[RMDB]
RNA sequence: GGGAACGACUCGAGUAGAGUCGAAAAUAAGUUGCUACAUAAAGAAUACACAGGCCAGCCUGAGCAACAUGGUGACACCCUAUCUCUAUAGAAAAAUACAAAAAUUAGUCGGGCAUGGUGGUGCAUGCCUGUGGUCCCAGCUACUUGGAGGCUGAGAAUUAUUACGCGUGUUCGCACGCGUAAUAAUAAAAGAAACAACAACAACAAC
Reactivity to DMS in 0.01 (KOAc 150mM, MgCl2 10mM, bicine 150mM(pH8.5), 24C), signal-to-noise 1, nucleotides 027 to 156: u030a070a200g000u030u030g010c000u010a170c060a150u000a110a050a230g010a180a180u020a140c100a090c000a100g010g000c090c010a050g040c010c010u000g020a060g000c020a030a070c060a060u000g010g030u010g000a080c060a060c020c010c030u000a080u000c040u000c050u020a110u020a100g000a000a040a090a050a050u010a160c090a040a080a010a070a100u000u010a050g040u010c030g010g010g060c030a040u000g000g010u010g010g060u010g020c050a060u000g010c000c010u010g040u010g000g030u000c010c060c000a020g030c000u000a030c070u010u000g010g000a210g030g030c010u000g010a030g000a080